Description
The record gives the reactivity of an RNA of 177 nucleotides to DMS and 2A3. Values cover nucleotides 27 to 126. For 2A3, 3,118 sequencing reads were counted. As a SHAPE reagent, 2A3 marks flexible, mostly unpaired nucleotides at the ribose 2'-OH. For 2A3 the reverse transcriptase was SuperScript II with manganese.
[RMDB]
RNA sequence: GGGAACGACUCGAGUAGAGUCGAAAACACACGCACGGCGCCUCCCCCACAGUUCUCCGAUUCCAAUUUUCCGCAAGGAAUGUCAUCGCGACCGCCCCGCCGGUGUCUGGACACCCGCAGUACGUCGGCAUGUUAAUAAGUUCGCUUAUUAACAUGCAAAAGAAACAACAACAACAAC
Reactivity to DMS in 0.01 (KOAc 150mM, MgCl2 10mM, bicine 150mM(pH8.5), 24C), signal-to-noise 6, nucleotides 027 to 126: c070a100c120a050c060g000c050a070c030g000g020c040g010c020c020u000c020c000c000c020c030a090c130a110g020u000u000c020u000c010c030g010a100u010u010c040c050a060a090u000u000u000u000c010c010g020c230a080a130g010g010a030a040u000g010u000c040a060u000c060g010c060g000a070c050c050g010c030c030c020c040g010c040c020g000g010u000g000u010c030u010g000g000a070c090a080c020c010c030g020c050a060g020u010a060c080g010u010c080g010
Reactivity to 2A3 in 0.01 (KOAc 150mM, MgCl2 10mM, bicine 150mM(pH8.5), 24C), signal-to-noise 2, nucleotides 027 to 126: c030a000c000a000c000g040c010a050c040g050g010c020g060c000c000u040c000c000c000c000c000a020c010a050g020u040u000c040u010c000c020g020a050u090u060c030c000a040a030u050u070u080u020c010c000g030c050a020a020g020g040a040a010u050g050u050c030a050u100c040g030c040g060a040c000c020g000c010c010c000c000g020c010c000g010g000u000g020u030c050u050g030g030a010c000a060c000c010c010g050c010a010g050u070a020c030g040u010c010g080